[RMDB]
RNA sequence: GGGAACGACUCGAGUAGAGUCGAAAAGCCUUACGAUUCGUCGUAAGGCAUACAAAGUAUUGGCACUAUGAGCCCGCAGCGUUGGUGCUCCCACGCGGUGCAAUACGACGGAUUUCGAUCCGUCGAAGUGACAUAGACGUUUCGACGUCUAUGUCACAAAAGAAACAACAACAACAAC
Reactivity to DMS in 0.01 (KOAc 150mM, MgCl2 10mM, bicine 150mM(pH8.5), 24C), signal-to-noise 2, nucleotides 027 to 126: g000c000c000u000u000a000c000g000a010u000u010c190g020u000c010g010u000a000a000g000g010c000a010u000a020c210a100a090a130g030u000a070u010u000g040g000c000a030c050u000a130u000g000a120g000c020c010c000g010c090a080g000c070g000u040u000g010g000u030g000c190u020c020c040c040a060c080g000c040g010g000u000g010c010a070a040u000a060c000g000a030c000g000g010a010u000u000u010c210g000a030u000c000c010g000u000c010g000a010a080
Reactivity to 2A3 in 0.01 (KOAc 150mM, MgCl2 10mM, bicine 150mM(pH8.5), 24C), signal-to-noise 3, nucleotides 027 to 126: g030c000c000u000u000a010c000g000a010u030u060c180g060u010c000g000u100a010a010g000g030c000a020u040a010c000a000a140a000g050u020a040u050u130g170g000c010a000c060u070a060u270g070a040g050c010c000c010g000c030a110g020c020g070u110u130g000g040u180g070c030u090c020c000c010a020c040g040c030g010g000u030g000c000a020a030u090a040c050g000a000c000g020g000a020u020u080u100c160g050a010u020c000c000g000u000c010g010a090a010

The record gives the reactivity of an RNA of 177 nucleotides to DMS and 2A3.
Source: RMDB library M2PK50, as collected in RNAgym.
For 2A3, 4,557 sequencing reads were counted.
Reactivities are given for positions 27 through 126.